[RMDB]
RNA sequence: GGGAACGACUCGAGUAGAGUCGAAAAGCACCGUCGAAUACCUGGUCGGUCAGGACGGCUUGAUCUCGUUCUUGGAGGUCAACACGCGCCUUCAGGUAGAACACCCGGUCACCGAGGAAACCGCGGGCCGGUGCCCCAUGUUCGCAUGGGGCACCGGAAAAGAAACAACAACAACAAC
Reactivity to 2A3 in 0.01 (KOAc 150mM, MgCl2 10mM, bicine 150mM(pH8.5), 24C), signal-to-noise 1, nucleotides 027 to 126: g000c040a030c080c000g090u110c020g070a120a050u140a120c020c030u030g120g080u100c040g010g010u050c160a000g030g010a080c000g000g000c000u080u060g020a070u010c000u030c010g130u300u010c100u060u080g050g000a000g020g000u000c000a000a010c020a010c030g050c000g050c000c000u000u010c010a030g000g000u110a160g110a070a030c040a060c020c140c000g000g000u040c030a100c060c000g000a050g000g040a040a160a030c000c000g000c030g010g000g000

Chemical mapping of a 177-nucleotide RNA with 2A3. 2A3 adducts were read by reverse transcription with SuperScript II with manganese. The RNA was probed in 150 mM KOAc, 10 mM MgCl2 and 150 mM bicine (pH 8.5) at 24 C.